[RMDB]
RNA sequence: GGGAACGACUCGAGUAGAGUCGAAAAAGAUGGCUAUUUUUGACGAGCUCUUACAGAUGCCAGAAACAAAGCUUGUUGCAGGUGGUGCUGCUCAAAACACUGCUAGAGGGGCAGCAUACGUUUUGGGCAUUAGGGCGUUGUUCGCAACGCCCUAAUGAAAAGAAACAACAACAACAAC
Reactivity to DMS in 0.01 (KOAc 150mM, MgCl2 10mM, bicine 150mM(pH8.5), 24C), signal-to-noise 2, nucleotides 027 to 126: a110g010a150u000g000g020c030u010a070u000u020u000u020u000g000a060c100g020a080g000c050u000c020u000u000a120c150a100g000a050u000g000c020c010a060g000a090a050a070c100a040a080a080g000c090u000u000g020u000u000g020c070a030g020g010u000g010g000u000g010c050u000g010c000u000c020a010a030a060a030c060a080c130u000g000c020u000a120g000a150g000g010g010g030c100a010g000c090a040u010a030c190g000u000u000u000u000g020g000g010
Reactivity to 2A3 in 0.01 (KOAc 150mM, MgCl2 10mM, bicine 150mM(pH8.5), 24C), signal-to-noise 1, nucleotides 027 to 126: a030g130a030u090g050g040c030u020a090u050u100u030u120u170g030a010c060g030a040g070c030u000c030u070u030a050c040a090g120a090u120g050c000c000a070g050a050a090a010c030a030a070a010g060c070u100u050g090u160u140g020c060a020g000g110u100g040g000u000g040c040u010g000c000u000c010a090a020a000a010c050a010c020u170g030c010u070a000g040a050g200g010g030g000c020a030g030c000a080u070a110c080g000u010u010u000u000g050g010g000